[RMDB]
RNA sequence: GGGAACGACUCGAGUAGAGUCGAAAAACUUUGAUGGCGGUACUAUGAAUUGAUGCAAGGUGUGGAGCGACCUUAAACAGUUCUGGUGGUGCUCUGAAUGGAGUGCUCUACAGAGAUUAUAAAAUAGCAUGCAUAGAGUGCUUCGGCACUCUAUGAACACGAUGUACGGGUUCGCCCGUACAUCGUGAAAAGAAACAACAACAACAAC
Reactivity to 2A3 in 0.01 (KOAc 150mM, MgCl2 10mM, bicine 150mM(pH8.5), 24C), signal-to-noise 2, nucleotides 027 to 156: a000c050u120u070u110g070a090u120g020g020c040g000g020u040a040c040u060a090u130g050a080a070u100u080g040a040u080g070c020a030a040g040g000u020g020u070g060g000a030g010c010g000a010c010c000u050u060a060a080a010c020a030g010u030u000c010u040g010g010u010g000g010u000g010c000u000c030u080g100a050a060u210g050g000a000g010u020g020c020u000c020u040a040c010a000g070a010g000a030u060u080a040u160a070a090a060a050u100a030g040c050a030u130g000c000a000u010a010g000a000g000u000g020c000u020u020c090g060g010c000a000c020u000c000u000a000u000g000a000a000

Notes:
This 207-nucleotide RNA was probed chemically with 2A3. It was measured as part of the RMDB library M2RFPK. The reactions ran in a buffer of 150 mM KOAc, 10 mM MgCl2 and 150 mM bicine (pH 8.5), at 24 C. The 2A3 profile rests on 1,420 reads.